[RMDB]
RNA sequence: GGGAACGACUCGAGUAGAGUCGAAAACAAACUCCUGGCUUCAGAUGAUCCGCCCACCUUGGCUUCCCAAAGUGCUGGGAUUACAGGCAGAGGCCACUGUGCCUGGCAUGAAGAACAAUUUUUAAAAGAAUGACUUUUAAGGAUAUUAAGUCAUCAAUACAAUCUGCGUAUUCGUACGCAGAUUGUAAAAAGAAACAACAACAACAAC
Reactivity to 2A3 in 0.01 (KOAc 150mM, MgCl2 10mM, bicine 150mM(pH8.5), 24C), signal-to-noise 1, nucleotides 027 to 156: c010a010a150a060c150u090c040c030u010g040g000c020u080u030c040a070g010a160u080g010a000u060c010c040g050c100c000c000a030c000c010u040u040g020g000c020u050u000c020c000c000a030a110a020g090u110g010c030u010g000g060g000a040u120u270a040c010a020g000g000c060a050g050a040g130g040c000c000a020c040u040g000u000g000c010c010u020g000g000c020a030u040g040a040a040g070a070a000c010a030a070u050u030u080u160u270a130a200a020a000g080a060a010u030g030a030c010u150u060u220u000a080a100g160g000a050u080a050u170u130a030a010g040u000c000a020u020c020a030a030
The record gives the reactivity of an RNA of 207 nucleotides to 2A3. The reactions ran in a buffer of 150 mM KOAc, 10 mM MgCl2 and 150 mM bicine (pH 8.5), at 24 C.